[RMDB]
RNA sequence: GGGAACGACUCGAGUAGAGUCGAAAAUUAAGUCGACCGAAGCCUGCACUCAUAGGAGGAAUGAUGCAUUGUAUAGAUAACCUCUGCAAGAAUGUCAACUUCAUCAAUCUUGUCAGGAAAGGACCGCGGUCCUGGAGGAAUUCGUUCCUCCAGGACCAAAAGAAACAACAACAACAAC
Reactivity to 2A3 in 0.01 (KOAc 150mM, MgCl2 10mM, bicine 150mM(pH8.5), 24C), signal-to-noise 2, nucleotides 027 to 126: u220u020a130a070g050u030c030g010a060c000c030g020a010a000g020c000c000u040g000c030a030c030u050c020a030u040a040g020g080a010g050g050a100a200u100g070a010u030g000c030a030u000u050g130u170a050u050a060g060a050u050a090a080c020c010u060c000u000g000c000a000a030g080a090a080u110g080u100c020a090a060c110u130u050c010a080u030c010a050a160u030c070u050u090g070u040c030a000g110g000a140a050a010g040g030a030c090c020g060c070
Reactivity to DMS in 0.01 (KOAc 150mM, MgCl2 10mM, bicine 150mM(pH8.5), 24C), signal-to-noise 2, nucleotides 027 to 126: u000u110a020a050g040u000c140g010a080c100c050g000a020a150g000c000c000u000g020c030a150c060u000c090a060u000a050g060g090a080g010g000a050a120u000g000a000u000g000c050a100u000u000g030u030a080u030a130g010a000u010a010a050c100c100u000c000u000g000c000a050a030g060a020a140u020g000u000c090a100a030c230u030u000c040a040u000c090a020a080u010c120u020u000g010u000c080a040g050g000a020a080a050g000g000a120c070c030g010c220

Background
Source: RMDB library OK1LIB, as collected in RNAgym. This 177-nucleotide RNA was probed chemically with 2A3 and DMS. For DMS, 1,637 sequencing reads were counted. The 2A3 profile rests on 1,821 reads. DMS adducts were read by reverse transcription with MarathonRT. 2A3 adducts were read by reverse transcription with SuperScript II with manganese. Conditions: 150 mM KOAc, 10 mM MgCl2 and 150 mM bicine (pH 8.5), 24 C.